[RMDB]
RNA sequence: GGGAACGACUCGAGUAGAGUCGAAAAAGAUGACGACACUUCUGUUCAAUCUCAUAUCCUAUCCAUACUGGAUGUAAAACACGCAUGUGGCGCUGACUGGUGCGUUAACCAGUUUUUUAAAUAUAUAGGUAAGGUUCAAUUUCGAUUGAACCUUACCAAAAGAAACAACAACAACAAC
Reactivity to 2A3 in 0.01 (KOAc 150mM, MgCl2 10mM, bicine 150mM(pH8.5), 24C), signal-to-noise 1, nucleotides 027 to 126: a010g010a050u140g030a010c020g010a000c070a030c080u060u050c070u100g060u090u140c000a000a050u000c000u010c020a030u080a030u150c000c000u040a100u230c000c000a000u000a130c040u050g000g000a000u000g120u210a000a000a030a030c060a000c040g000c060a030u030g000u000g020g010c050g000c000u070g090a000c050u000g000g000u000g000c060g000u010u060a000a010c000c010a000g000u000u000u000u000u000u000a000a170a000u070a000u040a030u150a080
Reactivity to DMS in 0.01 (KOAc 150mM, MgCl2 10mM, bicine 150mM(pH8.5), 24C), signal-to-noise 1, nucleotides 027 to 126: a050g010a130u010g020a020c030g020a280c110a010c040u000u010c100u000g000u040u000c020a040a160u000c000u000c030a130u050a030u010c000c020u010a030u070c020c000a030u000a010c100u000g040g000a010u000g000u000a000a060a020a060c080a020c070g020c070a040u000g040u010g010g020c000g080c000u020g000a060c000u000g000g000u010g000c020g010u000u030a030a020c020c010a000g000u000u000u010u060u010u050a050a070a050u020a150u030a120u040a120